The record gives the reactivity of an RNA of 177 nucleotides to 2A3 and DMS. It was measured as part of the RMDB library OK2TST. The reactions ran in a buffer of 150 mM KOAc, 10 mM MgCl2 and 150 mM bicine (pH 8.5), at 24 C. Values are in units of 0.01, from 0 to 300, in steps of 10. The DMS profile rests on 1,547 reads.

RNA sequence: GGGAACGACUCGAGUAGAGUCGAAAAUAUUAGUUGAUUCAUGAAUCGUUAAUCCAAUGUGUGGCUGUAUUCUAUAACCAUCAUUCGCUAUAGUUGAAACAUAUUGUGAUAAUUGUAAUGGUGUAUACUUCAUGUGGAGUUUCGACUCCACAUGAAGAAAAGAAACAACAACAACAAC
Reactivity to 2A3 in 0.01 (KOAc 150mM, MgCl2 10mM, bicine 150mM(pH8.5), 24C), signal-to-noise 1, nucleotides 027 to 126: u150a030u170u090a040g070u000u160g010a100u030u000c050a070u170g130a140a040u080c020g000u060u060a030a070u050c000c020a040a000u030g060u000g000u060g000g000c030u080g020u140a120u130u010c030u050a040u080a110a020c080c020a030u090c010a080u150u110c070g000c040u060a000u000a050g020u040u060g110a010a090a000c010a030u020a060u060u010g050u060g020a040u040a160a050u080u080g110u210a010a050u070g050g030u020g090u030a060u110a130
Reactivity to DMS in 0.01 (KOAc 150mM, MgCl2 10mM, bicine 150mM(pH8.5), 24C), signal-to-noise 2, nucleotides 027 to 126: u010a100u010u000a070g030u000u000g000a090u010u010c040a080u000g010a040a090u000c060g020u000u000a090a110u010c030c010a090a040u010g020u000g030u010g030g020c070u000g000u010a110u000u000c010u000a060u000a010a040c070c120a040u010c160a050u000u010c210g000c100u000a010u000a010g020u000u000g000a060a060a040c050a030u000a030u000u010g010u010g020a050u010a030a060u000u000g010u030a060a040u000g000g020u010g010u000a110u000a110